[RMDB]
RNA sequence: GGGAACGACUCGAGUAGAGUCGAAAAGAUAUGGAGGCAACUUUUGACGGAAAGAGUGUCGGAAACGACACUGUUUCCGAUAAGUUGCUCCUAAGUCAAAAGUAUUAAGGGUUCGCCCUUAAUACAACGAUGGGAGCAAGUUCGCUUGCUCCCAUCGAAAAGAAACAACAACAACAAC
Reactivity to DMS in 0.01 (KOAc 150mM, MgCl2 10mM, bicine 150mM(pH8.5), 24C), signal-to-noise 1, nucleotides 027 to 126: g010a060u000a300u000g000g000a060g030g050c030a010a010c000u000u000u000u000g000a240c080g000g010a010a000a030g000a010g040u000g000u030c010g010g000a070a080a240c010g000a050c010a000c000u000g010u000u000u000c000c000g030a060u000a000a010g000u000u000g010c010u000c010c000u000a070a240g000u010c070a050a110a170a170g000u000a000u000u000a020a040g000g000g000u000u010c300g030c030c000c000u000u000a010a000u000a000c000a060a090
Reactivity to 2A3 in 0.01 (KOAc 150mM, MgCl2 10mM, bicine 150mM(pH8.5), 24C), signal-to-noise 1, nucleotides 027 to 126: g080a030u090a050u060g000g000a080g130g290c020a020a020c030u120u090u190u250g170a080c080g030g090a000a020a030g100a000g030u000g020u030c000g020g000a060a070a030c000g000a000c000a000c010u000g130u010u010u000c010c010g010a000u000a000a010g000u020u000g000c000u010c020c010u020a050a030g020u000c010a190a040a070a110g000u000a010u000u040a000a030g030g030g050u000u080c190g190c000c020c000u050u000a020a060u090a020c040a000a000
Structure probing data (DMS and 2A3) for a 177-nucleotide construct. For 2A3, 1,339 sequencing reads were counted. Conditions: 150 mM KOAc, 10 mM MgCl2 and 150 mM bicine (pH 8.5), 24 C. Source: RMDB library TTRDEL, as collected in RNAgym.